[RMDB]
RNA sequence: GGGAACGACUCGAGUAGAGUCGAAAAGCUAGAGCGUUGUCGUAGGCUGCGAAGCGGUCGUUAGGCCGGAUAUGCGACGUCAGUUUGAUCCUGACCGGCCUAAGGAUCUUACUGGUGCUCUAGGAAAGGGUAGUUCGCGCUUCGGUGCGGAUUGCCCAAAAGAAACAACAACAACAAC
Reactivity to DMS in 0.01 (KOAc 150mM, MgCl2 10mM, bicine 150mM(pH8.5), 24C), signal-to-noise 9, nucleotides 027 to 126: g010c000u000a010g000a010g000c010g020u020u010g010u000c040g020u010a100g010g010c010u010g010c110g010a140a120g020c040g010g010u000c000g010u010u020a050g010g000c000c000g000g000a210u040a070u020g010c030g020a020c030g010u020c040a030g010u000u010u000g000a040u000c020c010u000g000a140c020c010g000g000c010c000u010a070a020g000g000a010u000c000u000u010a020c020u000g000g020u020g000c000u000c000u000a010g000g010a060a080a130
Reactivity to 2A3 in 0.01 (KOAc 150mM, MgCl2 10mM, bicine 150mM(pH8.5), 24C), signal-to-noise 9, nucleotides 027 to 126: g070c000u000a000g000a000g000c020g060u080u110g030u080c020g020u030a010g020g010c020u020g010c060g090a130a020g060c040g030g050u020c030g060u060u090a030g010g000c000c010g020g010a110u160a040u250g030c050g010a010c010g050u100c010a020g010u010u060u070g020a020u010c000c000u020g030a050c020c010g010g000c000c000u010a040a020g010g000a000u000c000u010u030a010c010u010g020g020u080g000c000u000c000u000a000g000g020a050a070a040
Annotation:
Chemical mapping of a 177-nucleotide RNA with DMS and 2A3. For 2A3 the reverse transcriptase was SuperScript II with manganese. DMS adducts were read by reverse transcription with MarathonRT. 2A3 is a SHAPE reagent: it acylates the 2'-hydroxyl of flexible nucleotides of all four kinds. Values cover nucleotides 27 to 126.